[RMDB]
RNA sequence: GGGAACGACUCGAGUAGAGUCGAAAAAGGUUGGCAAACCGCGACGCAGAUCGUCAUCAUCCAUUGCCGGUAAAUCAUCAUGAAUUAAUGAGUAAGCGUGGAUACACUCAACGGCGGCAGCGGGUGCCUGUCCCAAAGCAUUCGUGCUUUGGGACAGAAAAGAAACAACAACAACAAC
Reactivity to DMS in 0.01 (KOAc 150mM, MgCl2 10mM, bicine 150mM(pH8.5), 24C), signal-to-noise 2, nucleotides 027 to 126: a090g030g050u010u000g010g010c040a030a090a120c020c010g040c030g010a150c040g000c060a050g000a100u010c090g000u000c080a100u010c130a020u000c000c000a040u000u000g070c010c010g030g000u000a060a060a120u000c050a090u000c070a020u010g020a130a070u010u020a050a030u000g000a060g010u000a180a090g020c010g050u000g000g000a030u000a070c180a110c130u000c110a050a080c150g000g020c020g000g020c050a100g070c050g010g000g000u000g000c040
Reactivity to 2A3 in 0.01 (KOAc 150mM, MgCl2 10mM, bicine 150mM(pH8.5), 24C), signal-to-noise 2, nucleotides 027 to 126: a000g110g030u130u060g010g030c040a200a120a080c020c000g000c000g000a030c020g040c090a060g020a180u150c030g120u020c000a090u040c000a000u000c030c000a020u160u300g000c000c020g000g000u150a080a090a050u090c040a050u000c010a030u090g140a110a280u100u130a270a020u040g040a000g130u120a020a020g000c000g010u020g010g000a070u060a060c090a030c130u180c040a140a000c060g040g000c020g000g070c080a020g000c000g000g000g000u020g000c000